[RMDB]
RNA sequence: GGGAACGACUCGAGUAGAGUCGAAAACAAGUAUGAUCUCAAUCCAUGAAUUUCAACACAAGAGUCACACAAUCUGAAAUAACAACUUCAUGCAUAACCACACUCCAUAGUUCAAAUGGAGCCUGAAGCCUGGGCUGACAUUCGUGUCAGCCCAGGCAAAAGAAACAACAACAACAAC
Reactivity to 2A3 in 0.01 (KOAc 150mM, MgCl2 10mM, bicine 150mM(pH8.5), 24C), signal-to-noise 1, nucleotides 027 to 126: c040a040a000g060u000a000u160g220a300u000c000u010c040a040a040u100c030c120a070u130g000a010a050u010u090u060c180a230a110c100a030c000a300a040g090a010g170u040c000a000c000a000c000a000a090u010c090u060g000a090a070a050u150a000a070c090a010a010c030u000u000c000a030u000g040c000a010u000a250a000c130c000a060c070a090c010u000c000c000a010u130a130g090u230u140c040a160a000a000u000g010g010a000g000c000c000u060g010a130a000

The record gives the reactivity of an RNA of 177 nucleotides to 2A3.